[RMDB]
RNA sequence: GGGAACGACUCGAGUAGAGUCGAAAAGGGACUGGCCCGAUGAAGCCCGGCAACCUAACUUUAUUUAAGCGUAAAGUGAAGGUGCUAAUUCCAGCAAAAUGGUGUAUUCCGUUUUGAUAGAUAAGAGAAGCGUGACAUGAGUUCGCUCAUGUCACAAGUUGUCUCUAAGGUUCGCCUUAGAGACAACAAAAGAAACAACAACAACAAC
Reactivity to DMS in 0.01 (KOAc 150mM, MgCl2 10mM, bicine 150mM(pH8.5), 24C), signal-to-noise 2, nucleotides 027 to 156: g050g000g020a190c020u000g020g000c000c000c000g000a130u000g000a170a140g000c010c000c030g000g030c020a040a010c000c010u010a090a010c010u000u000u000a000u000u000u000a120a230g010c260g010u000a020a020a060g000u000g000a100a070g010g020u010g000c010u000a110a150u010u000c000c020a050g000c000a000a020a010a020u000g010g030u000g050u000a120u010u010c000c010g040u000u000u000u010g000a040u000a030g020a090u000a110a110g000a110g000a080a090g020c090g010u000g000a010c000a020u000g010a030g010u000u020c300g020c010u000c000a000u000g020u000c000a000c010a000a040
Reactivity to 2A3 in 0.01 (KOAc 150mM, MgCl2 10mM, bicine 150mM(pH8.5), 24C), signal-to-noise 4, nucleotides 027 to 156: g010g000g000a010c020u020g030g010c000c000c000g010a050u100g070a040a010g040c000c000c000g010g020c030a080a110c000c000u020a010a000c010u060u030u030a040u060u180u150a130a040g090c040g030u010a010a020a020g010u020g080a130a040g000g010u000g000c000u010a030a040u140u020c010c010a000g000c020a060a000a000a020u020g040g000u080g050u200a130u190u050c000c010g010u000u000u000u030g060a070u070a180g070a080u150a230a110g090a020g050a140a030g120c080g060u000g000a000c000a000u000g000a000g040u050u140c200g030c080u000c000a000u000g000u000c000a000c000a000a010
The record gives the reactivity of an RNA of 207 nucleotides to DMS and 2A3. Conditions: 150 mM KOAc, 10 mM MgCl2 and 150 mM bicine (pH 8.5), 24 C. For DMS the reverse transcriptase was MarathonRT. 2A3 adducts were read by reverse transcription with SuperScript II with manganese.